[RMDB]
Chemical mapping of a 177-nucleotide RNA with DMS and 2A3. Conditions: 150 mM KOAc, 10 mM MgCl2 and 150 mM bicine (pH 8.5), 24 C. High DMS reactivity at an A or C suggests that its Watson-Crick edge is free. High 2A3 reactivity points to a flexible backbone, as in loops and unpaired stretches. The data come from the RNA Mapping Database (RMDB), library OK1LIB.

RNA sequence: GGGAACGACUCGAGUAGAGUCGAAAAUAGAGAUUACGCUCUCUUGUUCUUAAUUAGAAAAACGAGAGCAACAUUGGAUUCUAAGUGAACACUAUGGAGACUCCUAGAUGGGAAAAGGGAGGAAAGACACGUCUUGAAGUUUCGACUUCAAGACGUGAAAAGAAACAACAACAACAAC
Reactivity to DMS in 0.01 (KOAc 150mM, MgCl2 10mM, bicine 150mM(pH8.5), 24C), signal-to-noise 3, nucleotides 027 to 126: u030a070g010a090g030a040u010u070a100c170g000c030u010c000u000c000u010u000g000u000u000c000u010u010a120a170u070u030a160g000a000a010a040a010a040c170g000a020g000a020g010c010a090a150c090a090u010u010g020g020a170u010u030c020u010a080a070g000u000g000a080a060c070a120c060u000a020u020g020g020a170g020a120c030u000c010c010u000a130g060a120u030g000g030g000a060a020a140a100g000g000g030a070g000g010a010a070a060g030a130
Reactivity to 2A3 in 0.01 (KOAc 150mM, MgCl2 10mM, bicine 150mM(pH8.5), 24C), signal-to-noise 8, nucleotides 027 to 126: u130a010g090a010g020a040u100u160a080c080g010c020u000c000u000c010u030u070g100u090u010c020u030u150a300a300u120u220a070g070a020a050a000a010a010c070g000a000g000a000g080c010a020a000c030a030u040u100g100g030a080u080u030c040u090a110a150g040u100g180a070a020c040a020c060u050a060u100g060g010a050g050a070c000u010c010c000u030a070g030a190u140g060g030g000a030a070a020a040g030g000g010a040g000g060a020a050a020g100a010